[RMDB]
This 177-nucleotide RNA was probed chemically with 2A3 and DMS. The DMS profile rests on 1,307 reads. For DMS the reverse transcriptase was MarathonRT. Conditions: 150 mM KOAc, 10 mM MgCl2 and 150 mM bicine (pH 8.5), 24 C.
RNA sequence: GGGAACGACUCGAGUAGAGUCGAAAAGCACGCUGUCUGUAUGGGAGUCAGGCCGACGGACUGUGUCACGGCCUACAAGUGCGAGGACUGUGAACCGAGAUUGCUGAUAGUCACCAUCGCCGAGGCAAUCGCCAUGAUGCUUCGGCAUCAUGGCGAUAAAAGAAACAACAACAACAAC
Reactivity to 2A3 in 0.01 (KOAc 150mM, MgCl2 10mM, bicine 150mM(pH8.5), 24C), signal-to-noise 2, nucleotides 027 to 126: g050c000a000c080g000c030u030g050u060c030u060g080u090a070u150g010g020g020a050g090u110c070a010g010g050c010c000g070a050c050g100g020a050c010u090g000u050g000u180c030a030c130g040g000c000c000u030a030c030a100a200g140u070g100c100g050a040g020g030a060c020u020g000u020g110a060a020c060c060g010a020g020a070u120u040g110c070u080g020a030u050a040g070u080c040a020c110c010a050u000c020g000c040c000g010a030g070g000c000a000
Reactivity to DMS in 0.01 (KOAc 150mM, MgCl2 10mM, bicine 150mM(pH8.5), 24C), signal-to-noise 2, nucleotides 027 to 126: g010c070a070c050g020c060u020g000u000c020u000g010u000a060u020g010g000g030a140g020u010c160a120g040g020c040c010g010a090c220g000g000a040c030u030g050u010g010u000c020a120c080g010g000c020c040u000a080c110a100a090g010u020g000c080g000a110g010g010a080c000u000g030u000g000a040a160c070c030g010a100g020a140u010u010g030c010u000g010a080u010a110g000u000c020a130c110c050a070u000c090g030c020c020g030a060g000g020c080a080